[RMDB]
Overview: Structure probing data (2A3 and DMS) for a 170-nucleotide construct. For DMS, 10,921 sequencing reads were counted. DMS adducts were read by reverse transcription with MarathonRT.

RNA sequence: GGGAACGACUCGAGUAGAGUCGAAAACAUCAAGGAGCUCAUGUGGCUUCUAAUGAUGCAAUAAUGACUCGUUGUUUAGCUAUUCAUUCUUGUUUUAUAGAACGUGUGGAUUGGGAUAUAGAGUAUCGUGCCUUCACCUUCGGGUGAAGGAAAAGAAACAACAACAACAAC
Reactivity to 2A3 in 0.01 (KOAc 150mM, MgCl2 10mM, bicine 150mM(pH8.5), 24C), signal-to-noise 6, nucleotides 027 to 129: c000a000u010c010a010a010g000g000a000g030c000u020c110a200u300g150u300g140g000c000u000u000c000u010a040a110u020g000a000u010g010c040a000a080u130a080a080u150g020a020c020u010c010g070u020u110g060u060u110u100a030g030c020u020a020u010u000c020a030u040u000c030u120u060g060u080u070u040u060a150u030a080g110a060a010c010g000u000g000u010g040g010a000u010u080g050g010g020a010u020a050u060a200g020a010g050u050a050u070c050g020u060g040
Reactivity to DMS in 0.01 (KOAc 150mM, MgCl2 10mM, bicine 150mM(pH8.5), 24C), signal-to-noise 3, nucleotides 027 to 129: c020a030u000c010a030a070g030g000a060g010c040u010c050a190u080g040u140g040g010c000u000u000c000u000a170a120u010g020a020u010g030c150a000a000u040a090a100u050g020a070c020u000c020g000u060u020g030u040u070u070a190g010c050u020a050u080u000c030a070u000u060c030u050u060g010u020u000u010u010a070u020a140g050a000a000c040g000u020g040u050g020g010a020u000u000g060g040g030a080u010a060u050a030g020a080g010u000a050u010c070g000u050g030